[RMDB]
RNA sequence: GGGAACGACUCGAGUAGAGUCGAAAACCGGAAAAUUCACUCCCAAGAAGGUAAGAGAGAACUCAAGAGUUGGAAGCUCUCCCGAGAACGCUGGAGGCAUCUCGGAAUAGGAAAGAGGGAAGGUGGAGUUAUAGAGAGUGUUCGCACUCUCUAUAACAAAAGAAACAACAACAACAAC
Reactivity to 2A3 in 0.01 (KOAc 150mM, MgCl2 10mM, bicine 150mM(pH8.5), 24C), signal-to-noise 2, nucleotides 027 to 126: c030c000g080g060a120a150a000a040u150u090c010a000c040u020c000c020c010a030a080g090a070a010g080g040u130a170a000g000a000g000a010g000a110a020c030u050c140a090a080g060a100g220u150u130g100g050a040a050g000c000u000c000u000c000c020c000g010a010g000a120a050c110g000c050u120g120g100a110g120g000c010a040u020c020u010c010g040g060a040a090u090a120g050g040a100a030a070g090a110g020g020g010a010a020g060g000u030g000g050a040
Reactivity to DMS in 0.01 (KOAc 150mM, MgCl2 10mM, bicine 150mM(pH8.5), 24C), signal-to-noise 3, nucleotides 027 to 126: c010c030g000g010a070a050a080a140u000u000c050a080c050u000c010c030c010a070a100g020a110a110g000g000u000a070a070g010a080g000a050g000a060a090c060u010c050a050a080g010a090g010u000u010g010g000a090a120g010c050u000c030u000c050c010c010g010a020g000a030a060c120g010c030u010g000g010a110g010g010c040a060u010c000u000c020g000g010a080a070u020a070g010g000a070a030a100g020a140g010g000g010a040a040g000g000u000g000g010a150